[RMDB]
RNA sequence: GGGAACGACUCGAGUAGAGUCGAAAACGCCUCUCUCACCGCAAGUUGGAUCGACCGGACUAUGGGGGACAAAACAUGUGUCCUAAAUCCGCUCCUGAUGUCUGUGCCACGGUGAGUGUUGAGAGCAGUGCUAACAAGGAUUCGUCCUUGUUAGCACAAAAGAAACAACAACAACAAC
Reactivity to DMS in 0.01 (KOAc 150mM, MgCl2 10mM, bicine 150mM(pH8.5), 24C), signal-to-noise 3, nucleotides 027 to 126: c110g020c080c000u000c010u000c010u000c010a030c000c010g070c090a090a080g030u010u000g000g000a070u010c150g000a050c060c030g000g010a050c050u000a210u020g000g000g000g000g020a010c010a070a070a080a110c300a080u030g000u010g000u010c000c010u000a010a120a130u000c060c000g010c100u020c030c080u000g020a050u010g000u020c020u000g000u070g000c040c090a210c000g020g000u010g000a040g030u010g060u000u000g000a030g010a060g010c060a130
Reactivity to 2A3 in 0.01 (KOAc 150mM, MgCl2 10mM, bicine 150mM(pH8.5), 24C), signal-to-noise 8, nucleotides 027 to 126: c040g020c010c000u000c000u000c000u000c000a000c000c010g010c090a150a130g070u140u060g050g010a050u110c060g080a040c030c020g010g000a010c030u070a140u200g070g000g000g000g000a010c020a010a140a080a020c120a120u220g080u020g090u110c000c010u040a070a050a070u090c040c050g040c050u050c020c020u060g030a070u110g030u020c020u020g090u110g040c000c010a020c010g000g010u010g010a090g000u010g020u020u050g020a050g010a010g010c090a020
This 177-nucleotide RNA was probed chemically with DMS and 2A3. The data come from the RNA Mapping Database (RMDB), library OK1LIB. The RNA was probed in 150 mM KOAc, 10 mM MgCl2 and 150 mM bicine (pH 8.5) at 24 C. Values cover nucleotides 27 to 126.